[RMDB]
Conditions: 150 mM KOAc, 10 mM MgCl2 and 150 mM bicine (pH 8.5), 24 C. The record gives the reactivity of an RNA of 207 nucleotides to DMS and 2A3. The 2A3 profile rests on 1,702 reads. It was measured as part of the RMDB library OK3TST. 2A3 adducts were read by reverse transcription with SuperScript II with manganese. Values cover nucleotides 27 to 156.
RNA sequence: GGGAACGACUCGAGUAGAGUCGAAAAGUAGUUGCCAUUGUGCAAAAGAUUGAUAUUUCAUUACUCUCAGCUAAAGUUCUGAAAAGCAGAAUCAUCAUGAAAUAUCUUUGAAGAGAGAAAAGACAAGGGAAGAAAAGAAGAACGAAAUGAGUUCAGAAAUAUCCUAUUUAUUCGUAAAUAGGAUAUUAAAAGAAACAACAACAACAAC
Reactivity to DMS in 0.01 (KOAc 150mM, MgCl2 10mM, bicine 150mM(pH8.5), 24C), signal-to-noise 2, nucleotides 027 to 156: g000u010a090g020u010u000g000c000c020a280u000u000g010u000g010c060a050a040a120a130g000a060u010u000g020a010u000a030u020u000u000c000a100u010u000a100c010u000c000u010c030a260g020c080u000a060a170a100g010u000u010c030u000g000a050a070a120a210g020c030a030g000a120a040u000c050a100u000c070a070u000g010a020a030a010u000a000u000c020u010u000u000g020a080a080g000a090g020a160g000a080a090a010a100g010a040c040a030a040g020g020g030a050a080g000a040a020a040a090g000a040a060g020a050a070c050g030a060a070a120u020g000a140g020u010u010c030a050g000a070
Reactivity to 2A3 in 0.01 (KOAc 150mM, MgCl2 10mM, bicine 150mM(pH8.5), 24C), signal-to-noise 3, nucleotides 027 to 156: g060u040a000g010u000u060g020c030c070a140u110u210g060u090g050c030a050a040a030a090g080a060u060u130g010a010u020a020u000u020u000c010a020u000u100a040c040u030c030u020c070a050g010c040u130a250a130a020g030u170u090c010u040g120a200a150a030a010g080c050a020g040a030a050u080c040a030u020c010a000u060g000a000a020a000u000a000u000c000u050u070u100g040a070a020g050a000g010a000g030a020a050a020a010g020a010c020a010a010g000g060g000a030a000g020a020a100a030a010g050a030a020g000a020a030c030g020a030a030a110u120g010a040g040u020u040c010a000g050a000